Structure probing data (DMS) for a 177-nucleotide construct.
The data come from the RNA Mapping Database (RMDB), library OK2TST.
The RNA was probed in 150 mM KOAc, 10 mM MgCl2 and 150 mM bicine (pH 8.5) at 24 C.
[RMDB]
RNA sequence: GGGAACGACUCGAGUAGAGUCGAAAAUGGGCAGGAACUGGCCGCGGUAGCGCCAGCUGAACGGGAUGUCGGCCGGGAUCCGGAACACCGGGUCGGCCAUGCCCGCGGUGUGGCCCGCGUCGACGAAUGCCUAGGAUACCUUCGGGUAUCCUAGGCAAAAAGAAACAACAACAACAAC
Reactivity to DMS in 0.01 (KOAc 150mM, MgCl2 10mM, bicine 150mM(pH8.5), 24C), signal-to-noise 1, nucleotides 027 to 126: u000g010g000g060c020a060g000g000a110a210c050u000g000g030c090c040g030c040g000g000u000a080g000c060g000c000c020a090g000c020u000g030a090a050c040g020g000g020a100u020g000u000c090g000g020c020c030g040g000g000a020u000c010c000g000g000a260a140c230a090c010c000g030g000g010u000c020g000g000c040c040a000u000g020c000c020c030g010c070g000g020u000g010u000g000g000c020c010c050g010c140g000u000c020g010a080c110g010a120a140